[RMDB]
RNA sequence: GGGAACGACUCGAGUAGAGUCGAAAAAUCGAAUCCGGAAACAGCUGGUUCCGACCGAAACAUGUCGAAGCAUGACCUCUGCCGAGGUAGUCUGUGGGGUAGAGCGACGGAUUGGGGGACCGCACUCACCUAAGUCGUCUUUCGAGACGACUUAGGUAAAAGAAACAACAACAACAAC
Reactivity to DMS in 0.01 (KOAc 150mM, MgCl2 10mM, bicine 150mM(pH8.5), 24C), signal-to-noise 2, nucleotides 027 to 126: a010u050c050g000a090a000u000c000c000g000g010a090a060a050c090a020g010c080u090g050g010u010u000c030c020g030a070c020c010g000a060a070a250c010a060u020g000u030c070g000a160a070g010c010a000u020g000a090c050c070u000c000u020g030c120c020g000a050g000g000u000a090g020u020c020u030g000u020g000g010g010g000u020a050g030a070g020c050g010a140c040g000g000a050u000u030g060g020g000g030g000a150c120c020g030c070a130c080u020c080
Reactivity to 2A3 in 0.01 (KOAc 150mM, MgCl2 10mM, bicine 150mM(pH8.5), 24C), signal-to-noise 3, nucleotides 027 to 126: a000u080c080g010a060a030u060c020c010g010g050a040a090a000c050a020g030c030u120g040g000u040u040c010c010g050a050c000c000g060a000a050a030c080a020u150g030u070c090g070a110a030g060c000a020u080g030a030c030c000u030c040u060g050c030c080g090a070g060g030u080a030g070u000c080u050g130u070g020g050g000g020u020a070g020a020g020c000g040a040c010g040g000a040u060u060g040g000g000g030g030a000c000c020g000c000a070c020u030c000